[RMDB]
Structure probing data (2A3 and DMS) for a 177-nucleotide construct.

RNA sequence: GGGAACGACUCGAGUAGAGUCGAAAAUACUAGCAUUCGGUUCGAACCCUGGAUGGAUACUCAAAGGUUGGCUGAGUUCCUUCCUCCGGCCUUGGUUCCGAUGCUCCAUCCAAGGCCGGAAACCAAAGUUACAGUACUGUUUCGACAGUACUGUAACAAAAGAAACAACAACAACAAC
Reactivity to 2A3 in 0.01 (KOAc 150mM, MgCl2 10mM, bicine 150mM(pH8.5), 24C), signal-to-noise 4, nucleotides 027 to 126: u160a020c040u020a020g070c020a050u040u080c030g010g020u030u040c020g030a050a050c010c000c000u030g000g010a010u020g000g010a030u070a160c010u010c030a050a060a070g230g010u100u050g080g000c030u010g010a000g010u010u000c000c000u000u010c000c020u000c000c000g000g000c000c000u000u000g000g000u110u070c040c010g040a050u100g040c040u010c020c010a040u010c000c000a000a000g000g000c000c010g000g000a010a000a000c040c000a080a070a010
Reactivity to DMS in 0.01 (KOAc 150mM, MgCl2 10mM, bicine 150mM(pH8.5), 24C), signal-to-noise 5, nucleotides 027 to 126: u010a060c030u000a080g020c070a060u000u000c000g010g020u000u000c040g010a040a300c040c010c010u010g000g000a030u000g000g010a030u010a020c020u010c020a030a100a080g020g020u010u000g010g000c140u000g000a050g000u000u000c010c010u000u000c030c010u000c000c010g010g010c010c000u000u000g010g000u000u000c080c070g000a100u000g020c060u010c060c040a060u000c010c000a000a010g000g010c000c000g000g000a000a040a070c160c130a030a070a140
For 2A3, 15,114 sequencing reads were counted.